[RMDB]
About this RNA
This 177-nucleotide RNA was probed chemically with DMS and 2A3. DMS adducts were read by reverse transcription with MarathonRT. Reactivities are given for positions 27 through 126.
RNA sequence: GGGAACGACUCGAGUAGAGUCGAAAAUUGUUUGAGGAAGCAGCAUAUGGUGGUUAAGAGCAUAGGAUCUAGAGGCAGAUACCUCUGAGUUAAGGGUCCCAGCCCUUCACUUGUGAGCUUGAGCAAGGUAUUCCUCGGAAUUCGUUCCGAGGAAUACAAAAGAAACAACAACAACAAC
Reactivity to DMS in 0.01 (KOAc 150mM, MgCl2 10mM, bicine 150mM(pH8.5), 24C), signal-to-noise 3, nucleotides 027 to 126: u010u010g020u000u010u000g010a110g000g010a070a130g020c060a080g000c080a080u010a080u010g010g010u000g030g000u000u000a060a080g020a020g010c040a080u000a120g000g020a040u000c040u000a060g010a060g000g020c050a100g010a120u020a100c100c030u010c020u010g010a080g000u010u010a050a100g000g010g010u000c040c040c040a170g010c000c000c000u000u000c070a050c010u000u000g020u000g000a090g010c060u010u010g000a120g020c070a040a040g000
Reactivity to 2A3 in 0.01 (KOAc 150mM, MgCl2 10mM, bicine 150mM(pH8.5), 24C), signal-to-noise 1, nucleotides 027 to 126: u120u070g050u060u050u070g030a030g030g040a020a020g040c020a010g020c020a020u050a060u200g070g020u040g040g020u100u070a060a000g030a010g020c030a040u070a090g000g060a020u030c030u050a020g020a050g060g020c070a030g070a180u080a050c010c020u000c010u010g010a000g020u050u050a030a020g030g010g020u060c070c000c020a050g020c020c000c000u030u000c020a000c000u030u040g060u040g070a020g050c010u020u070g080a020g040c030a000a020g060

The 2A3 profile rests on 1,316 reads. 2A3 adducts were read by reverse transcription with SuperScript II with manganese. Values are in units of 0.01, from 0 to 300, in steps of 10. The reactions ran in a buffer of 150 mM KOAc, 10 mM MgCl2 and 150 mM bicine (pH 8.5), at 24 C.